[RMDB]
This 177-nucleotide RNA was probed chemically with DMS and 2A3. For DMS the reverse transcriptase was MarathonRT. Conditions: 150 mM KOAc, 10 mM MgCl2 and 150 mM bicine (pH 8.5), 24 C.
RNA sequence: GGGAACGACUCGAGUAGAGUCGAAAAGAUAUGGAGAUGGUACUGGAGAAGCUCAUCGGAAACGAUGGUCUUCGUUGAAAGUACACAUCUCCUAAGUCAAACUAGAAUUGGUUCGCCAAUUCUAGAAGUCAUCAUAAGCGUUCGCGCUUAUGAUGACAAAAGAAACAACAACAACAAC
Reactivity to DMS in 0.01 (KOAc 150mM, MgCl2 10mM, bicine 150mM(pH8.5), 24C), signal-to-noise 1, nucleotides 027 to 126: g000a040u000a240u020g010g010a000g040a010u000g020g010u000a000c000u000g020g020a100g010a000a020g010c020u000c000a000u000c010g000g000a100a040a160c000g010a000u000g000g000u000c000u000u000c000g010u030u030g040a230a130a020g000u000a000c000a120c000a000u000c000u000c000c000u000a000a060g020u000c040a180a170a230c000u000a000g000a020a010u000u000g000g020u000u000c220g020c000c000a000a010u000u000c000u000a000g000a080a090
Reactivity to 2A3 in 0.01 (KOAc 150mM, MgCl2 10mM, bicine 150mM(pH8.5), 24C), signal-to-noise 1, nucleotides 027 to 126: g030a020u050a010u090g010g020a000g000a000u010g000g030u030a010c040u060g150g140a200g000a080a010g000c010u010c010a010u000c010g010g000a010a030a060c000g030a000u000g000g050u030c010u010u000c000g000u070u070g140a190a100a000g000u000a010c070a000c000a020u010c010u000c010c000u000a000a000g010u000c030a030a090a240c000u040a010g000a000a000u010u000g000g060u050u130c300g040c120c000a010a010u000u000c010u000a010g030a030a040
The DMS profile rests on 1,286 reads.